The record gives the reactivity of an RNA of 207 nucleotides to 2A3 and DMS.
Source: RMDB library OK3TST, as collected in RNAgym.
The RNA was probed in 150 mM KOAc, 10 mM MgCl2 and 150 mM bicine (pH 8.5) at 24 C.
The 2A3 profile rests on 2,157 reads.
Values cover nucleotides 27 to 156.
RNA sequence: GGGAACGACUCGAGUAGAGUCGAAAAUCUGACAGAGGUUGAAGGAGUCAUGCAGACAGGAAACAUAAGUUGGCUGUAGCGCUUUCUGGAAAUGCUGACAAUUGUCUCCUUUAUUAUUCUUGUCUUGCAUUCUGCAGACCAUAAACAAAUGGCAUAAGCUAAAUUUAUCGUUCGCGAUAAAUUUAGCAAAAGAAACAACAACAACAAC
Reactivity to 2A3 in 0.01 (KOAc 150mM, MgCl2 10mM, bicine 150mM(pH8.5), 24C), signal-to-noise 4, nucleotides 027 to 156: u040c030u020g030a030c040a080g100a040g070g060u040u060g080a060a020g010g010a030g030u140c070a020u030g000c010a010g010a020c000a020g030g030a030a090a000c050a050u110a070a000g020u030u040g030g000c020u050g070u160a040g030c020g000c080u080u160u100c060u110g080g040a060a080a070u130g020c020u050g030a060c020a090a150u140u070g000u020c000u010c010c000u050u050u030a070u090u030a060u030u020c010u000u010g000u010c010u040u100g020c000a000u020u020c020u050g000c010a040g030a100c000c000a020u080a040a120a030c100a030a110a050u080g060g010c060a040u080a200a030
Reactivity to DMS in 0.01 (KOAc 150mM, MgCl2 10mM, bicine 150mM(pH8.5), 24C), signal-to-noise 2, nucleotides 027 to 156: u010c070u000g010a100c020a070g000a070g020g000u000u010g010a050a150g000g010a180g040u010c080a090u000g020c000a040g020a110c050a060g040g020a040a030a050c100a100u000a010a130g020u000u000g030g000c040u010g030u000a090g000c100g060c040u000u000u010c050u010g000g010a090a050a110u000g020c020u000g010a010c030a070a190u010u010g000u000c010u000c000c040u000u000u010a040u030u000a140u000u000c020u000u000g030u000c040u000u000g000c040a160u000u000c010u010g000c080a250g010a080c040c010a040u000a070a060a170c100a020a100a100u010g010g000c040a040u010a150a290